[RMDB]
Conditions: 150 mM KOAc, 10 mM MgCl2 and 150 mM bicine (pH 8.5), 24 C. An RNA of 207 nucleotides, treated with DMS and 2A3 and read out base by base. The data come from the RNA Mapping Database (RMDB), library VIROID. The DMS profile rests on 11,588 reads. For DMS the reverse transcriptase was MarathonRT.
RNA sequence: GGGAACGACUCGAGUAGAGUCGAAAAGGGGCGCAAAGCAAGAACGGUCCAAGGGCUAGUUGACCUCCCUCGGCACGAGGACGUGCCUGAUUUUGAGUGGGGGAGGAUGUCACGGACAAAUUCCGUGGCCGUGUUAGGCCAACAUUGAAGAGCGUACGUAUUAAGUAUGCUUCGGCAUACUUAAUACAAAAGAAACAACAACAACAAC
Reactivity to DMS in 0.01 (KOAc 150mM, MgCl2 10mM, bicine 150mM(pH8.5), 24C), signal-to-noise 4, nucleotides 027 to 156: g030g010g010g000c050g010c060a080a120a170g000c060a080a080g000a070a080c060g010g020u000c020c020a120a170g030g020g040c040u000a080g000u000u010g010a160c020c000u000c010c010c000u010c030g020g020c020a040c010g020a170g040g000a230c050g030u000g010c000c000u000g000a130u000u000u000u000g010a160g030u000g030g010g030g020g010a060g010g000a050u000g020u000c010a030c010g030g000a120c040a130a080a160u010u010c000c000g040u010g010g040c000c110g010u000g020u000u000a080g010g020c030c030a080a070c070a180u010u000g000a110a080g000a110g010c010g030u000a130c180
Reactivity to 2A3 in 0.01 (KOAc 150mM, MgCl2 10mM, bicine 150mM(pH8.5), 24C), signal-to-noise 9, nucleotides 027 to 156: g030g000g020g000c030g010c050a070a050a040g030c040a040a030g050a100a010c060g040g020u020c040c030a060a100g040g010g000c020u070a040g080u060u120g090a090c000c000u010c000c010c000u020c030g020g000c000a000c010g050a150g170g160a100c070g000u000g000c000c000u080g110a210u050u150u190u260g160a100g050u250g000g000g000g000g000a000g000g000a000u030g010u000c010a010c010g000g020a030c100a070a160a050u210u010c010c000g000u010g000g000c000c010g060u110g080u100u110a020g010g000c010c010a020a000c030a050u050u120g010a070a020g020a000g060c060g020u070a050c110